[RMDB]
This 177-nucleotide RNA was probed chemically with DMS and 2A3. The 2A3 profile rests on 1,899 reads. DMS adducts were read by reverse transcription with MarathonRT.
RNA sequence: GGGAACGACUCGAGUAGAGUCGAAAAACAUAGCGCUGCUGAAAUUGAACAGGAGUAUUAAUUUCAAUGUUCAUAUCCAGCCCAUUUGCAUACUCCUAAAUCCCGCUAGUGCGCCCAGUGUGGCUAACGAGCUAAUUUAGUUCGCUAAAUUAGCUCGAAAAGAAACAACAACAACAAC
Reactivity to DMS in 0.01 (KOAc 150mM, MgCl2 10mM, bicine 150mM(pH8.5), 24C), signal-to-noise 3, nucleotides 027 to 126: a100c040a090u000a060g020c140g050c060u010g020c100u010g000a020a080a170u000u020g000a040a070c100a030g000g000a050g000u000a050u000u000a080a080u010u010u010c070a120a100u000g020u010u000c030a040u000a110u000c060c020a120g000c020c070c060a150u010u010u010g010c130a060u000a050c050u000c010c040u000a070a110a120u000c040c050c020g030c100u010a020g010u000g030c070g030c000c040c030a110g010u010g020u000g010g020c060u010a060a110
Reactivity to 2A3 in 0.01 (KOAc 150mM, MgCl2 10mM, bicine 150mM(pH8.5), 24C), signal-to-noise 3, nucleotides 027 to 126: a000c030a020u120a040g000c030g000c060u070g000c020u030g050a080a120a160u140u030g020a040a010c010a040g030g040a010g070u080a090u200u210a160a100u090u120u100c060a090a070u040g020u010u030c010a020u030a020u050c040c010a010g010c000c000c000a120u090u060u040g020c020a010u010a090c010u040c020c000u060a080a110a080u070c030c010c000g010c050u050a010g110u080g170c060g030c050c020c020a100g120u150g030u090g190g020c000u010a050a020